Source: RMDB library TTRDEL, as collected in RNAgym. This 177-nucleotide RNA was probed chemically with 2A3 and DMS. 2A3 adducts were read by reverse transcription with SuperScript II with manganese. For DMS, 776 sequencing reads were counted. The reactions ran in a buffer of 150 mM KOAc, 10 mM MgCl2 and 150 mM bicine (pH 8.5), at 24 C. For DMS the reverse transcriptase was MarathonRT.
[RMDB]
RNA sequence: GGGAACGACUCGAGUAGAGUCGAAAAGAUAUGGAUCCUAGGGAGGAACUACCAGCCGAGUCGGAAACGAUAUCUGGUAUUUCCGAAGAACUAGGAUCCUAAGUCAAAAGUGUAGUUCGCUACACAAGCCCCGUAUAUUGUUCGCAAUAUACGGGGCAAAAGAAACAACAACAACAAC
Reactivity to 2A3 in 0.01 (KOAc 150mM, MgCl2 10mM, bicine 150mM(pH8.5), 24C), signal-to-noise 1, nucleotides 027 to 126: g040a000u100a050u180g000g000a000u000c000c000u010a010g000g020g020a070g010g000a010a020c040u000a000c010c000a030g040c140c150g140a040g110u000c010g000g020a080a050a010c000g010a010u010a020u150c010u030g020g030u010a010u000u040u010c000c000g170a110a030g010a000a010c010u000a010g000g000a000u000c000c000u000a000a000g070u010c010a030a000a000a190g000u030g000u000a010g020u020u130c280g050c220u000a010c000a020c010a010a000
Reactivity to DMS in 0.01 (KOAc 150mM, MgCl2 10mM, bicine 150mM(pH8.5), 24C), signal-to-noise 1, nucleotides 027 to 126: g020a020u000a300u000g020g020a030u020c000c000u000a020g030g000g020a130g000g000a000a020c100u000a010c000c000a040g020c300c210g000a100g010u000c010g000g010a070a130a140c000g030a010u000a100u000c010u000g020g000u000a000u000u020u000c000c000g000a070a140g000a110a110c030u010a000g000g000a000u000c000c000u000a020a110g050u000c010a070a070a050a130g020u010g000u020a000g020u010u010c290g020c020u000a010c020a010c020a130a150